The data come from the RNA Mapping Database (RMDB), library OK2TST. Chemical mapping of a 177-nucleotide RNA with 2A3 and DMS. Values cover nucleotides 27 to 126. The RNA was probed in 150 mM KOAc, 10 mM MgCl2 and 150 mM bicine (pH 8.5) at 24 C.
[RMDB]
RNA sequence: GGGAACGACUCGAGUAGAGUCGAAAAUAAGUGUCUCUUCUGCUAAUCCUUGUGCCUCAAGAGGGCAGGGCCCAUGCCUAUGUAUUCCCAGACCCAAGGACUUUGCCUUAUACAUGGCAGAUGCUCCGAACGAUAGGAGAUUCGUCUCCUAUCGUUCAAAAGAAACAACAACAACAAC
Reactivity to 2A3 in 0.01 (KOAc 150mM, MgCl2 10mM, bicine 150mM(pH8.5), 24C), signal-to-noise 6, nucleotides 027 to 126: u150a050a010g050u020g100u060c010u010c000u140u010c040u030g030c020u050a060a080u070c010c010u040u060g060u080g140c010c010u070c080a110a070g030a120g080g020g000c010a010g010g030g000c010c020c020a050u080g010c000c010u110a100u110g070u020a070u010u030c010c000c000a010g040a070c040c020c020a040a080g000g000a010c000u030u020u020g000c000c000u140u110a170u050a200c110a080u090g000g000c000a000g010a070u070g010c070u010c020c020
Reactivity to DMS in 0.01 (KOAc 150mM, MgCl2 10mM, bicine 150mM(pH8.5), 24C), signal-to-noise 6, nucleotides 027 to 126: u010a070a090g030u000g010u000c030u000c030u000u010c020u000g020c050u000a110a150u010c030c020u000u000g020u010g010c040c030u000c080a090a100g020a150g010g000g010c030a070g000g000g010c050c030c040a080u000g000c020c010u000a060u000g010u000a140u010u000c010c010c010a170g010a100c050c040c050a080a130g010g000a030c050u010u000u000g010c010c010u000u000a140u020a110c250a070u000g000g010c000a010g010a030u000g000c150u000c020c040

The 2A3 profile rests on 9,775 reads.